An RNA of 207 nucleotides, treated with 2A3 and read out base by base. Reactivities are given for positions 27 through 156. The data come from the RNA Mapping Database (RMDB), library OK3TST. Values are in units of 0.01, from 0 to 300, in steps of 10.
RNA sequence: GGGAACGACUCGAGUAGAGUCGAAAAUACACUGAAUUGCAAUGGCUGGUUUGUCUAUGUUCUUUCUUAGACUGUAAAUUUCAUAUGGUUUUGUAUCAUAUCUUUCAUAUUUAUCCAUUAUGGCCGGUACCUAGCUUAGUGGCUAGAAAUUAGUAGAGCUAUGAACAGGGUUCGCCCUGUUCAUAGCAAAAGAAACAACAACAACAAC
Reactivity to 2A3 in 0.01 (KOAc 150mM, MgCl2 10mM, bicine 150mM(pH8.5), 24C), signal-to-noise 1, nucleotides 027 to 156: u070a000c020a000c070u030g050a020a070u080u080g000c010a000a010u000g000g010c000u020g010g070u140u020u060g000u000c000u020a120u000g140u190u070c080u010u090u040c020u000u030a060g000a010c000u010g010u080a050a020a070u110u160u080c060a020u000a000u070g000g000u020u090u070u140g050u090a010u190c000a010u080a060u180c070u090u160u060c060a020u020a110u170u050u020a110u060c000c000a000u110u060a020u210g010g000c010c010g000g030u050a020c000c000u010a010g000c000u030u000a000g030u070g180g000c000u000a020g050a010a070a070u120u120a020g090u030a070g000a000